[RMDB]
RNA sequence: GGGAACGACUCGAGUAGAGUCGAAAAAUCAAGCGAACAGCAAAGUUCACCCUCCAAGAUGAGGGAAUGGUAGUCCGUGACAAACAAAGACCAGCUAUCUGGAGAGACUACGAGGGCAAGACAUGGGAUCAACUUGAGGAGGGUAUCUAAUGGGAGCUCUUAGCAUCGUUUUCGAACGAUGCUAAGAAAAAGAAACAACAACAACAAC
Reactivity to DMS in 0.01 (KOAc 150mM, MgCl2 10mM, bicine 150mM(pH8.5), 24C), signal-to-noise 1, nucleotides 027 to 156: a180u000c040a020a120g030c040g040a010a050c020a070g000c140a060a150a100g070u020u020c000a100c000c000c020u000c000c020a100a190g040a140u000g000a000g000g010g050a020a000u010g020g020u010a060g000u000c000c010g030u010g050a150c100a120a110a120c040a060a200a100g000a090c030c010a150g030c110u040a070u000c070u000g020g000a090g040a060g000a070c010u000a020c120g000a090g020g000g010c030a090a100g000a050c090a090u040g020g000g000a070u010c060a050a100c030u020u040g010a100g000g000a130g010g000g000u000a100u000c070u000a070a080u010g020g050g010a090g010c260
Reactivity to 2A3 in 0.01 (KOAc 150mM, MgCl2 10mM, bicine 150mM(pH8.5), 24C), signal-to-noise 2, nucleotides 027 to 156: a000u100c030a030a030g060c040g020a040a010c060a040g170c110a160a120a040g020u090u100c040a060c000c000c000u000c020c010a100a070g040a140u240g030a040g040g030g070a030a050u060g050g010u010a010g030u000c010c060g070u060g040a050c120a020a090a000c030a010a170a000g070a060c000c010a010g000c050u100a060u160c010u040g000g000a040g000a000g030a090c020u020a010c030g010a080g000g000g090c020a050a040g060a130c050a040u110g000g000g060a020u060c040a040a120c010u050u050g020a020g050g030a020g030g010g020u040a050u020c070u100a030a070u080g070g000g000a030g030c000
This 207-nucleotide RNA was probed chemically with DMS and 2A3. DMS adducts were read by reverse transcription with MarathonRT. The RNA was probed in 150 mM KOAc, 10 mM MgCl2 and 150 mM bicine (pH 8.5) at 24 C. For DMS, 1,395 sequencing reads were counted. The 2A3 profile rests on 1,019 reads. It was measured as part of the RMDB library OK3TST.